Chemical mapping of a 177-nucleotide RNA with DMS and 2A3. The data come from the RNA Mapping Database (RMDB), library OK2TST. Values cover nucleotides 27 to 126. Conditions: 150 mM KOAc, 10 mM MgCl2 and 150 mM bicine (pH 8.5), 24 C. For 2A3, 888 sequencing reads were counted.

[RMDB]
RNA sequence: GGGAACGACUCGAGUAGAGUCGAAAAGCACAACAUGGCGAUAGGCCUGAUUAGGGAUCAACGAUUCUGCACCGUCCAUCCAGAAGGCAUAUUCCAUUUUCAGGUGGUCGAGAUAGCGGCGCGCACCGCGGUCCACUAGUUUCGACUAGUGGACCGCAAAAGAAACAACAACAACAAC
Reactivity to DMS in 0.01 (KOAc 150mM, MgCl2 10mM, bicine 150mM(pH8.5), 24C), signal-to-noise 1, nucleotides 027 to 126: g000c040a050c110a040a150c110a070u010g010g000c020g030a090u020a120g040g000c030c020u000g000a120u000u020a130g010g000g040a070u000c120a060a060c060g040a150u000u010c000u000g000c060a140c110c070g010u000c050c140a070u000c050c020a060g000a120a020g020g040c070a030u000a080u020u010c000c030a040u000u000u000u000c070a080g020g070u000g000g010u000c090g000a060g010a090u010a050g020c060g010g020c040g030c120g020c060a050c080c080
Reactivity to 2A3 in 0.01 (KOAc 150mM, MgCl2 10mM, bicine 150mM(pH8.5), 24C), signal-to-noise 1, nucleotides 027 to 126: g000c020a020c010a060a090c040a080u070g070g000c060g040a040u080a160g120g000c010c000u010g050a070u090u220a090g060g020g030a010u050c020a000a110c020g030a020u130u000c020u060g040c060a040c060c030g000u000c010c010a040u000c000c000a000g020a100a040g070g000c100a020u040a080u080u010c050c020a080u050u050u050u150c060a010g070g030u030g000g040u090c010g000a040g020a100u100a040g000c040g070g000c010g000c020g010c120a030c030c030